[RMDB]
RNA sequence: GGGAACGACUCGAGUAGAGUCGAAAAGAUAUGGAUUACGAGAAGCGUACCGUUUGACGUCGGAAACGACCGAGGUACGAACUACUUCGAGUAAUCCUAAGUCAAAAUCAAGUCUUCGGACUUGAAAUCUCGAGUAUAUGUUCGCAUAUACUCGAGAAAAAGAAACAACAACAACAAC
Reactivity to 2A3 in 0.01 (KOAc 150mM, MgCl2 10mM, bicine 150mM(pH8.5), 24C), signal-to-noise 2, nucleotides 027 to 126: g010a010u050a040u090g000g000a010u000u010a020c000g000a010g000a050a010g000c000g010u000a010c010c030g050u100u250u300g120a080c110g000u040c000g040g000a030a030a060c000g010a010c000c080g080a080g020g000u010a010c010g020a010a000c010u180a020c000u010u000c000g000a020g000u020a000a000u000c000c000u010a020a010g010u000c020a090a000a030a230u000c000a010a000g010u000c000u050u150c300g130g000a000c000u020u010g020a070a060a040
Reactivity to DMS in 0.01 (KOAc 150mM, MgCl2 10mM, bicine 150mM(pH8.5), 24C), signal-to-noise 3, nucleotides 027 to 126: g000a040u020a300u000g010g000a010u000u000a010c000g020a300g010a010a020g000c010g010u000a000c000c000g000u000u020u000g020a150c300g000u010c010g000g010a090a090a130c000g000a000c000c030g000a060g000g010u000a010c000g000a070a030c050u020a260c010u000u000c000g010a300g000u000a010a000u000c000c000u000a010a110g000u000c030a070a080a090a100u000c000a000a020g000u000c000u000u000c240g030g000a000c000u000u010g010a000a100a090